[RMDB]
RNA sequence: GGGAACGACUCGAGUAGAGUCGAAAAUAAGCAAAAGACAACCACCUUUCCCGCUGACAAUAGCGUUCUCCCUCUGCACUUCGGUAAUAUGAGGGCACAGUAAAUCCCGCAAGGAUGAGAAUGUGAUUAAACAGUUACAGCUUCGGCUGUAACUGAACUCAUCAAGUGCGUUCGCGCACUUGAUGAGAAAAGAAACAACAACAACAAC
Reactivity to 2A3 in 0.01 (KOAc 150mM, MgCl2 10mM, bicine 150mM(pH8.5), 24C), signal-to-noise 1, nucleotides 027 to 156: u210a010a020g040c070a090a020a010a040g130a170c060a010a090c060c010a060c040c000u000u000u000c000c010c000g030c060u020g000a090c090a150a210u110a090g010c030g080u050u030c010u060c040c010c000u020c040u040g010c030a070c000u020u080c280g110g000u030a020a040u060a010u250g000a030g000g000g060c000a010c000a000g010u000a000a000a100u040c040c030c000g160c010a000a010g000g010a080u030g000a000g010a000a000u050g020u040g030a010u090u220a220a020a020c000a000g000u010u000a000c000a000g000c000u000u210c230g200g010c000u000g000u000a010a000c000u000g000a000a000
This 207-nucleotide RNA was probed chemically with 2A3.
It was measured as part of the RMDB library M2RFPK.
Values cover nucleotides 27 to 156.